[RMDB]
RNA sequence: GGGAACGACUCGAGUAGAGUCGAAAACCCAAGAUGAGUUUUCCCUACAGGUUCGUGGAAGACCACCACGUUGAUAGGUCGCAGGUGUAAGUGCAGCAAUGUAUUGAGCCGAGCGAUACUAAUUACCGUAUUACUGUACCUUCGGGUACAGUAAUACAAAAGAAACAACAACAACAAC
Reactivity to 2A3 in 0.01 (KOAc 150mM, MgCl2 10mM, bicine 150mM(pH8.5), 24C), signal-to-noise 1, nucleotides 027 to 126: c000c000c000a020a000g250a180u300g000a030g020u020u030u000u040c020c000c010u070a090c090a140g040g050u050u050c000g030u080g050g020a170a020g100a150c030c000a010c000c010a050c040g040u030u090g060a030u030a060g030g000u000c010g000c010a010g040g000u050g000u110a020a010g010u010g000c000a000g010c000a020a160u020g000u020a000u020u070g010a030g000c020c010g000a000g010c000g000a010u060a150c000u040a040a100u100u060a010c030c050
Reactivity to DMS in 0.01 (KOAc 150mM, MgCl2 10mM, bicine 150mM(pH8.5), 24C), signal-to-noise 3, nucleotides 027 to 126: c000c010c000a180a080g010a100u010g020a070g010u000u000u000u000c010c000c020u000a120c200a090g010g000u000u000c040g030u020g000g020a140a080g020a140c280c180a110c010c020a020c060g010u010u000g030a100u000a010g010g010u010c010g000c010a300g010g020u000g000u000a180a090g020u000g020c000a020g010c300a090a070u000g020u000a010u000u000g010a300g010c000c000g000a120g030c000g000a000u000a020c000u010a010a050u010u000a060c100c080

Chemical mapping of a 177-nucleotide RNA with 2A3 and DMS. The RNA was probed in 150 mM KOAc, 10 mM MgCl2 and 150 mM bicine (pH 8.5) at 24 C. For 2A3 the reverse transcriptase was SuperScript II with manganese. The DMS profile rests on 2,082 reads. The data come from the RNA Mapping Database (RMDB), library RFMREP.